[RMDB]
RNA sequence: GGGAACGACUCGAGUAGAGUCGAAAAGUCUAGCGAACGGAUCCCACCCGGGACACACGCAAGUCGCGAAUUAAGCCGACCGGCCAAGGUCAAUAGCAGAACUCAACUGCAUGAGUAAGCUAGACGACAUAGGUACCAGCUUCGGCUGGUACCUAUGAAAAGAAACAACAACAACAAC
Reactivity to DMS in 0.01 (KOAc 150mM, MgCl2 10mM, bicine 150mM(pH8.5), 24C), signal-to-noise 1, nucleotides 027 to 126: g000u000c000u000a000g010c000g010a190a020c090g000g000a050u020c030c000c000a180c300c040c030g000g000g030a160c090a100c110a080c060g010c040a040a080g000u000c060g000c060g000a090a160u000u000a110a070g090c010c110g010a170c130c170g000g020c030c030a010a210g020g000u000c030a110a100u020a110g020c000a130g000a010a050c140u000c210a020a120c110u000g000c020a060u010g000a100g020u000a080a250g000c000u000a050g000a000c020g010a120
Reactivity to 2A3 in 0.01 (KOAc 150mM, MgCl2 10mM, bicine 150mM(pH8.5), 24C), signal-to-noise 1, nucleotides 027 to 126: g020u000c000u000a020g000c000g060a000a030c060g050g000a040u000c020c020c000a020c000c010c020g060g000g000a020c010a010c010a010c110g080c070a110a040g150u050c030g030c050g070a100a280u210u050a230a020g020c030c020g020a030c000c000g000g000c030c040a080a030g050g050u000c020a020a080u050a060g020c000a010g050a150a050c050u110c250a080a130c010u080g010c000a030u030g020a000g050u000a010a010g010c000u010a000g000a020c000g000a000